[RMDB]
RNA sequence: GGGAACGACUCGAGUAGAGUCGAAAACUAAAACCGCCACUACAUCUCAAUCGCUGGCUUCACCCCUCAACGUGACAACGUCAUAUUCAGUCGGCGGAAAGAAGGUUGUCGGCGCUCGCCAGACUGGAUAAGAUGCACCUUUCGAGGUGCAUCUUAUAAAAGAAACAACAACAACAAC
Reactivity to DMS in 0.01 (KOAc 150mM, MgCl2 10mM, bicine 150mM(pH8.5), 24C), signal-to-noise 1, nucleotides 027 to 126: c020u000a080a030a040a100c060c050g020c000c010a040c060u010a070c050a100u000c010u010c070a060a050u000c040g000c010u000g010g030c040u010u000c080a250c020c000c070c000u000c050a070a070c060g000u000g050a070c110a060a070c100g010u010c120a080u010a080u010u010c060a000g010u000c030g000g000c000g000g000a080a040a120g000a050a130g000g000u000u000g050u000c060g000g030c080g000c060u010c100g030c010c010a130g000a040c020u000g000g000
Structure probing data (DMS) for a 177-nucleotide construct. DMS adducts were read by reverse transcription with MarathonRT. It was measured as part of the RMDB library OK2TST.